[RMDB]
RNA sequence: GGGAACGACUCGAGUAGAGUCGAAAAUCUGAAUCCUUCGGGAUUCAGAAAAGGCGGAGGGCCCGCCGGAACCGCUAUACAGGUGGAGGUUCCAUACCACCCAAAGGACUAACUUCGGUUAGUCCAACAUUGUCCAAAUGUUCGCAUUUGGACAAUGAAAAGAAACAACAACAACAAC
Reactivity to 2A3 in 0.01 (KOAc 150mM, MgCl2 10mM, bicine 150mM(pH8.5), 24C), signal-to-noise 2, nucleotides 027 to 126: u020c000u000g000a010a000u000c000c000u030u040c100g080g000g010a000u020u000c000a000g000a000a020a000a020g010g010c020g010g010a120g120g050g000c190c000c000g010c010c010g000g000a000a010c010c000g000c040u080a050u080a240c150a090g270g120u070g040g100a080g000g000u010u010c000c000a010u040a010c010c020a000c000c010c040a040a050a030g000g000a000c000u000a010a000c000u050u100c180g020g000u000u000a000g000u010c000c010a000a010
Reactivity to DMS in 0.01 (KOAc 150mM, MgCl2 10mM, bicine 150mM(pH8.5), 24C), signal-to-noise 3, nucleotides 027 to 126: u010c000u000g000a000a020u000c010c010u000u030c200g010g010g000a000u000u000c000a020g000a030a040a140a140g020g000c000g010g010a110g010g010g000c200c010c010g020c020c010g040g030a020a010c000c020g000c030u000a080u010a150c300a130g020g010u000g010g000a080g000g010u000u000c000c030a110u000a010c010c030a080c000c010c030a140a140a120g010g000a020c000u000a000a000c000u000u000c180g010g010u000u000a000g000u000c000c000a030a090
Structure probing data (2A3 and DMS) for a 177-nucleotide construct. For DMS the reverse transcriptase was MarathonRT.